The record gives the reactivity of an RNA of 177 nucleotides to DMS and 2A3.
RNA sequence: GGGAACGACUCGAGUAGAGUCGAAAAUGGCUGGGAGGCUGCAUGUUCUGCAGAAGAGUUAAAGAGGCCUUGAUGGCAGCGAUGUCGCGUUUCAAGUCGUCCACGACACUUGUGCCAGCAGCCGGCGGGCUCCAUGACUAUUCGUAGUCAUGGAGCCAAAAGAAACAACAACAACAAC
Reactivity to DMS in 0.01 (KOAc 150mM, MgCl2 10mM, bicine 150mM(pH8.5), 24C), signal-to-noise 2, nucleotides 027 to 126: u020g000g030c000u000g000g020g000a120g000g000c030u030g000c040a090u030g000u020u000c080u000g000c040a080g000a100a070g000a100g000u000u010a060a240a160g010a110g000g010c140c000u030u000g000a060u030g000g040c000a080g050c170g030a140u000g000u000c020g000c270g010u070u050u000c010a060a000g020u010c030g000u000c000c050a160c300g010a020c020a040c070u060u020g000u030g000c020c010a050g000c000a020g020c010c030g000g030c070g000
Reactivity to 2A3 in 0.01 (KOAc 150mM, MgCl2 10mM, bicine 150mM(pH8.5), 24C), signal-to-noise 3, nucleotides 027 to 126: u110g020g000c010u010g040g020g020a030g000g000c040u000g040c000a060u090g020u220u160c020u090g030c040a000g050a250a000g030a050g030u140u130a210a010a010g060a060g020g000c000c050u000u030g010a040u020g040g150c060a130g010c100g110a160u120g060u170c040g010c080g060u040u020u110c030a050a060g000u060c010g000u000c020c050a040c020g030a000c020a020c000u090u040g110u040g120c050c000a000g010c000a000g060c030c000g040g010c020g000

The data come from the RNA Mapping Database (RMDB), library OK1LIB. DMS (dimethyl sulfate) methylates the pairing face of unpaired adenines and cytosines. Reactivities are rounded to 0.1 and cut off at 0 and 3. Conditions: 150 mM KOAc, 10 mM MgCl2 and 150 mM bicine (pH 8.5), 24 C.